Structure probing data (DMS and 2A3) for a 207-nucleotide construct.
For 2A3, 950 sequencing reads were counted.
The RNA was probed in 150 mM KOAc, 10 mM MgCl2 and 150 mM bicine (pH 8.5) at 24 C.
[RMDB]
RNA sequence: GGGAACGACUCGAGUAGAGUCGAAAAUGGUACUAAUGCAAUGUAUAGUUAUGAUUCUAUGAGUUCUAAAGCAGGAAAGCCGAUUUUAGAAUCCAGUUUUUCUGCCAUUGUAUUUGAAGGAUUUUUUAAGGCCAAUACCGAAGUCUCAGAGGCGAUAACUUCCCUUAUUCUUCGGAAUAAGGGAAGUAAAAGAAACAACAACAACAAC
Reactivity to DMS in 0.01 (KOAc 150mM, MgCl2 10mM, bicine 150mM(pH8.5), 24C), signal-to-noise 1, nucleotides 027 to 156: u000g020g010u010a090c010u010a180a100u010g010c030a060a080u000g010u000a120u000a160g010u010u000a130u010g000a120u010u010c020u010a090u010g000a140g000u000u000c080u000a040a100a050g020c040a050g010g000a060a040a110g020c000c060g000a140u000u000u000u030a140g000a030a050u000c110c010a030g000u000u000u000u000u020c020u050g000c030c010a150u000u010g010u000a040u010u000u020g020a070a120g000g010a030u000u010u020u000u000u000a090a190g020g000c000c040a090a060u010a100c040c010g000a020a170g000u000c010u010c080a080g010a120g020g000c050g010a100u010a040
Reactivity to 2A3 in 0.01 (KOAc 150mM, MgCl2 10mM, bicine 150mM(pH8.5), 24C), signal-to-noise 2, nucleotides 027 to 156: u110g040g000u070a060c020u050a060a040u010g000c020a020a070u030g020u010a050u090a130g060u180u080a180u220g060a060u130u010c040u080a120u110g060a030g030u070u040c030u170a130a070a010g000c010a000g000g000a000a000a030g040c000c000g010a010u010u030u000u140a210g190a020a000u000c010c020a000g020u000u000u010u000u030c000u000g000c010c000a020u020u050g030u020a070u050u090u040g030a100a020g060g010a010u050u030u070u020u040u300a090a030g070g000c000c000a010a020u020a040c030c000g040a050a010g020u000c010u000c070a070g030a050g060g000c020g050a010u130a110
The DMS profile rests on 2,362 reads.
Values cover nucleotides 27 to 156.
2A3 adducts were read by reverse transcription with SuperScript II with manganese.